The record gives the reactivity of an RNA of 207 nucleotides to DMS and 2A3. DMS adducts were read by reverse transcription with MarathonRT. Conditions: 150 mM KOAc, 10 mM MgCl2 and 150 mM bicine (pH 8.5), 24 C.
[RMDB]
RNA sequence: GGGAACGACUCGAGUAGAGUCGAAAAGAUUCCUCGUUGUUGAGCGAGGUUUAAACAAAUCGACCACACAAACGUAGAGCCGACUACGGAUUUAUAAAUUCAGGCAUUAAGUGUGAUAAGGAGACAAAAAACGAUGUUGUGUUCGCACAACAUCGAAGUAAGAUUCUUAGUUCGCUAAGAAUCUUACAAAAGAAACAACAACAACAAC
Reactivity to DMS in 0.01 (KOAc 150mM, MgCl2 10mM, bicine 150mM(pH8.5), 24C), signal-to-noise 3, nucleotides 027 to 156: g000a300u000u010c010c000u000c050g020u010u010g010u000u000g000a170g040c010g030a040g010g010u000u000u000a080a060a150c070a050a110a160u000c020g000a090c000c030a030c020a300c030a090a150a150c050g010u010a080g030a120g050c120c080g000a140c010u000a040c040g000g000a150u010u000u000a060u020a070a070a100u000u000c050a180g010g000c020a150u000u010a070a130g000u000g020u010g000a080u020a080a140g020g020a190g000a110c060a000a080a070a090a100a160c040g020a000u020g000u010u020g030u010g020u000u000c300g080c040a030c000a010a000c000a000u000c000g000a010a060
Reactivity to 2A3 in 0.01 (KOAc 150mM, MgCl2 10mM, bicine 150mM(pH8.5), 24C), signal-to-noise 7, nucleotides 027 to 156: g060a090u140u090c000c000u000c000g010u000u020g010u010u020g000a010g010c000g010a000g000g020u040u090u050a030a030a010c050a000a000a010u010c000g010a000c010c010a010c000a000c010a020a180a010c010g000u010a000g010a010g040c000c010g040a020c010u010a000c000g030g000a020u040u260u040a120u100a070a070a060u210u230c020a010g000g030c010a010u130u210a150a080g010u010g010u000g020a010u040a070a070g160g010a050g020a050c130a060a140a020a010a020a020c010g000a000u000g000u000u000g000u000g010u050u070c170g020c040a000c000a000a000c000a000u000c000g000a010a000